[RMDB]
RNA sequence: GGGAACGACUCGAGUAGAGUCGAAAACACCGCCAAAUUGCGGGAAAUCCCUAAAACUUUGACUACCAAGUACACUUGUCGAAAGACGUGUAUGGCCAGGGCAACGACCUCGGGUAUGGUAAUAACGUCAAAAUAAAAUUGGUUGGUGAAAACGUGGGAAGUUUAUUGUCUUCGGACAAUAAACUUCAAAAGAAACAACAACAACAAC
Reactivity to 2A3 in 0.01 (KOAc 150mM, MgCl2 10mM, bicine 150mM(pH8.5), 24C), signal-to-noise 2, nucleotides 027 to 156: c030a000c000c000g000c000c000a060a160a150u130u050g000c030g020g000g090a130a060a090u090c000c000c000u040a080a050a050a090c020u000u000u000g000a000c020u010a000c000c090a000a000g010u000a000c010a010c030u230u290g000u010c000g030a070a020a030g000a000c000g000u010g000u000a000u040g000g040c000c000a010g010g000g080c110a110a070c140g070a110c000c000u040c150g000g020g030u140a300u070g000g000u000a000a000u000a010a000c000g000u000c000a000a000a020a000u120a020a090a000a030u060u060g050g020u020u090g020g030u000g050a080a030a000a000c060g060u140g020g120